Structure probing data (DMS and 2A3) for a 177-nucleotide construct.
[RMDB]
RNA sequence: GGGAACGACUCGAGUAGAGUCGAAAACUGGCGCGCGUACUGCACAACCACCUGCUCGACAGUGACAGCAUCGAGCGACGUGUGCUCGUUCCGGAUGCGGACGCGGGUCUGCACAUGAUGCGCACGAUAAAUGGGCGUGUUUCGACACGCCCAUUUAAAAAGAAACAACAACAACAAC
Reactivity to DMS in 0.01 (KOAc 150mM, MgCl2 10mM, bicine 150mM(pH8.5), 24C), signal-to-noise 2, nucleotides 027 to 126: c070u000g020g000c010g030c050g020c030g010u030a070c060u060g040c020a010c080a130a150c120c040a070c070c140u010g000c010u000c000g000a030c100a110g030u010g000a150c180a130g000c060a270u000c000g010a050g020c000g020a050c110g000u000g000u000g000c080u000c020g010u000u000c040c060g010g040a150u000g000c000g010g000a020c050g000c060g000g010g020u000c040u000g000c040a060c080a100u000g040a110u010g020c010g050c070a030c160g000a110
Reactivity to 2A3 in 0.01 (KOAc 150mM, MgCl2 10mM, bicine 150mM(pH8.5), 24C), signal-to-noise 1, nucleotides 027 to 126: c040u030g000g030c040g010c000g000c000g110u060a180c020u040g020c000a020c030a040a040c030c010a000c000c010u060g010c000u000c010g040a020c090a110g050u050g110a060c080a040g050c010a040u010c000g020a000g010c010g020a030c050g030u070g070u080g000c050u040c040g040u070u000c000c010g060g030a130u130g000c000g010g000a000c010g030c030g110g130g010u020c030u050g080c010a020c010a070u160g040a100u090g070c000g000c080a040c100g010a030

About this RNA: For DMS, 1,306 sequencing reads were counted. Conditions: 150 mM KOAc, 10 mM MgCl2 and 150 mM bicine (pH 8.5), 24 C.